Notes: Structure probing data (DMS) for a 207-nucleotide construct. The DMS profile rests on 1,705 reads.
RNA sequence: GGGAACGACUCGAGUAGAGUCGAAAAAGCUUGCCCUCGCCGCUUAAUUGACGGUGACGUUCCUCCAGUGAAGUCUGUGAAUUGGAGGGGCGACUACUUACAGGCUGGCCAAAAGAGCGGGCGACCGGCUCCGAGGCGAGAUCUACAGGCCGCUGGGGAGUAAAAGGACGUUCGCGUCCUUUUACUCAAAAGAAACAACAACAACAAC
Reactivity to DMS in 0.01 (KOAc 150mM, MgCl2 10mM, bicine 150mM(pH8.5), 24C), signal-to-noise 1, nucleotides 027 to 156: a070g000c020u010u000g000c000c090c010u000c000g020c000c000g010c010u090u110a180a180u000u000g000a010c000g020g000u000g000a130c010g010u000u000c010c000u000c000c000a070g000u000g000a220a110g000u000c020u000g000u010g000a160a020u000u030g000g020a020g000g040g000g000c000g060a060c060u000a150c190u010u000a050c020a010g000g020c020u000g010g030c010c010a020a060a100a020g010a020g050c000g040g000g020c100g000a020c000c000g000g010c000u010c000c000g000a300g010g060c000g020a160g000a110u010c030u000a300c070a020g010g010c020c020g000c010u020g050g010g030

About this RNA: In probing experiments dimethyl sulfate is read out at A N1 and C N3, which are open when not base-paired. Source: RMDB library ARCHII, as collected in RNAgym. The reactions ran in a buffer of 150 mM KOAc, 10 mM MgCl2 and 150 mM bicine (pH 8.5), at 24 C.